Source: RMDB library M2RFPK, as collected in RNAgym. Structure probing data (DMS and 2A3) for a 207-nucleotide construct. For 2A3 the reverse transcriptase was SuperScript II with manganese. As a SHAPE reagent, 2A3 marks flexible, mostly unpaired nucleotides at the ribose 2'-OH. Reactivities are given for positions 27 through 156.

[RMDB]
RNA sequence: GGGAACGACUCGAGUAGAGUCGAAAAACCUUAUUUUGAGAAGCUGAGGGAUUUGGCCCAUAGAAGCUUCAGCAACCGACUUUAAAUAGCACGGUGCUAAUACCAACGAGCAACUCGCAUGAUAAGUAAAACGUUGACAAGUUCGCUUGUCAACGAACUUAUCUACAAACUUCGGUUUGUAGAUAAGAAAAGAAACAACAACAACAAC
Reactivity to DMS in 0.01 (KOAc 150mM, MgCl2 10mM, bicine 150mM(pH8.5), 24C), signal-to-noise 1, nucleotides 027 to 156: a150c060c010u010u000a050u000u010u010u010g010a170g000a030a080g050c020u000g020a180g020g020g010a130u000u000u000g010g010c000c000c020a120u000a170g020a150a060g030c020u000u010c020a040g000c000a090a030c010c000g020a070c000u010u000u020a140a210a070u000a010g000c000a050c000g040g020u010g000c000u000a060a130u000a030c020c040a080a060c050g020a090g060c040a090a130c050u000c020g000c030a100u000g000a050u010a030a060g000u010a020a130a120a160c030g010u010u010g020a040c000a020a000g000u000u010c300g010c000u000u000g000u000c010a020a010c010g000a010a040
Reactivity to 2A3 in 0.01 (KOAc 150mM, MgCl2 10mM, bicine 150mM(pH8.5), 24C), signal-to-noise 3, nucleotides 027 to 156: a010c110c000u160u110a290u080u160u130u200g090a050g000a000a000g000c000u010g000a020g010g030g020a050u000u040u070g010g010c010c000c000a040u110a140g050a010a000g000c000u000u030c010a000g010c000a010a030c000c000g030a020c030u140u060u160a060a180a260u170a120g000c020a020c060g000g000u010g000c000u020a050a000u040a100c020c010a010a040c040g070a020g090c020a030a110c070u070c120g060c030a070u140g040a120u120a120a060g040u060a030a110a040a060c020g000u000u000g020a000c000a000a010g000u050u080c090g060c120u010u000g010u000c000a000a000c000g000a000a000